RNA sequence: GGGAACGACUCGAGUAGAGUCGAAAAGAAUUGGUAUGUAAGCUACUUCUUCCAGUAGCUGCGUCAUAACGUCAAGGUUAUGCAUACUGAGCCGAAGCUCAGCUUCGGUCCUCCAAGGAAGACCAAAUACAGCUCAGCCCGUUCGCGGGCUGAGCAACCUUCUUUAUAAGUUCGCUUAUAAAGAAGGAAAAGAAACAACAACAACAAC
Reactivity to DMS in 0.01 (KOAc 150mM, MgCl2 10mM, bicine 150mM(pH8.5), 24C), signal-to-noise 1, nucleotides 027 to 156: g010a060a110u000u000g030g050u000a000u020g020u010a300a300g010c000u000a030c000u000u010c020u000u000c030c000a300g020u020a010g000c010u010g000c020g010u000c000a020u000a000a000c010g000u010c250a120a190g050g000u020u000a020u010g000c000a000u000a070c110u000g060a150g000c010c040g000a040a040g000c000u000c200a100g000c020u000u010c010g020g000u010c000c010u000c050c050a120a100g040g020a040a040g000a290c120c040a060a030a140u000a050c120a130g050c010u000c000a030g070c000c000c040g030u000u000c270g050c080g090g050g000c010u010g010a060g010c000a020a010
Reactivity to 2A3 in 0.01 (KOAc 150mM, MgCl2 10mM, bicine 150mM(pH8.5), 24C), signal-to-noise 3, nucleotides 027 to 156: g070a010a080u020u020g010g000u000a000u000g000u000a000a010g010c000u000a010c000u090u120c000u000u010c010c000a000g000u000a000g020c000u010g000c000g000u010c000a000u000a000a000c010g060u060c300a110a040g300g000u000u000a000u000g000c000a000u000a000c000u000g010a000g000c000c000g000a000a000g010c040u100c300a040g000c000u020u000c000g000g000u000c010c010u040c060c080a040a060g000g000a000a010g000a010c010c060a040a080a010u230a130c080a030g000c000u010c000a000g000c030c010c010g070u120u090c140g020c020g040g000g000c000u010g000a010g010c010a000a000
Chemical mapping of a 207-nucleotide RNA with DMS and 2A3. The reactions ran in a buffer of 150 mM KOAc, 10 mM MgCl2 and 150 mM bicine (pH 8.5), at 24 C. For DMS, 1,702 sequencing reads were counted. DMS adducts were read by reverse transcription with MarathonRT.